[RMDB]
RNA sequence: GGGAACGACUCGAGUAGAGUCGAAAAAGCGUGCCGGUGCAGGCAAGAGACCACCGUAAGCGUCGUUGCGACCAAAUAAGCGCCGAUUCACAUCAGCGCGACUACGCUCUCGCUGCCUAAGCGACGGCUAGUCUGUCAGACCGGGAACGCCCUCGGCGACAAUACUACGCUUCGGCGUAGUAUUGUCAAAAGAAACAACAACAACAAC
Reactivity to 2A3 in 0.01 (KOAc 150mM, MgCl2 10mM, bicine 150mM(pH8.5), 24C), signal-to-noise 4, nucleotides 027 to 156: a010g060c030g020u050g040c010c010g000g000u000g020c030a020g030g000c000a000a000g090a010g020a070c030c020a010c020c020g100u130a040a030g000c000g020u030c000g000u010u010g010c000g040a140c030c090a110a030a130u190a160a050g030c050g000c050c040g040a050u140u170c100a070c030a160u070c020a010g010c000g000c000g030a000c000u010a010c050g010c000u010c020u020c030g000c040u060g060c040c100u150a100a010g000c000g000a030c020g010g000c000u030a050g000u000c010u020g090u080c010a030g030a170c000c020g000g000g020a030a040c020g050c020c000c000u020c020g040g000c030
Reactivity to DMS in 0.01 (KOAc 150mM, MgCl2 10mM, bicine 150mM(pH8.5), 24C), signal-to-noise 1, nucleotides 027 to 156: a160g000c040g050u000g000c030c010g010g000u000g020c090a140g000g040c040a100a010g000a160g020a130c070c030a090c130c010g000u030a040a120g020c150g040u000c070g060u000u000g030c000g010a120c070c060a090a160a130u020a110a180g020c010g040c030c000g050a060u000u000c260a100c070a300u020c020a030g050c020g020c020g020a080c070u000a020c080g000c020u000c120u000c000g000c010u010g000c050c040u010a160a160g020c000g020a040c010g000g000c020u020a060g000u020c020u000g050u000c030a110g010a080c020c020g030g040g030a050a090c060g000c010c030c050u000c070g000g040c030
Structure probing data (2A3 and DMS) for a 207-nucleotide construct. For 2A3, 2,508 sequencing reads were counted. Source: RMDB library ARCHII, as collected in RNAgym. For DMS, 2,065 sequencing reads were counted.